[RMDB]
RNA sequence: GGGAACGACUCGAGUAGAGUCGAAAAACUGAAACAGAGGCGUCACCCAAUUAUCAAUUGGUAAGUGAUAUCUAUGUUUCGAUCUGUAUCUCGGCCUUUCACUCCUCUUCUUCUUGAUGUAAGAAUUCUGAAACUCUCAAUUCGUUGAGAGUUUCAGAAAAGAAACAACAACAACAAC
Reactivity to 2A3 in 0.01 (KOAc 150mM, MgCl2 10mM, bicine 150mM(pH8.5), 24C), signal-to-noise 1, nucleotides 027 to 126: a000c030u030g020a010a010a000c010a000g020a000g110g020c020g000u000c000a000c000c030c000a010a000u150u130a160u170c160a050a030u000u050g060g010u180a200a180g010u000g010a000u030a010u070c000u000a060u000g020u000u000u010c000g020a070u080c050u040g050u080a060u020c020u020c020g030g000c000c020u080u130u180c040a040c000u000c010c000u020c000u050u000c010u090u000c040u050u090g040a040u020g080u010a050a050g050a160a120u040u000
Source: RMDB library RFM100, as collected in RNAgym. The record gives the reactivity of an RNA of 177 nucleotides to 2A3. The reactions ran in a buffer of 150 mM KOAc, 10 mM MgCl2 and 150 mM bicine (pH 8.5), at 24 C. For 2A3, 776 sequencing reads were counted.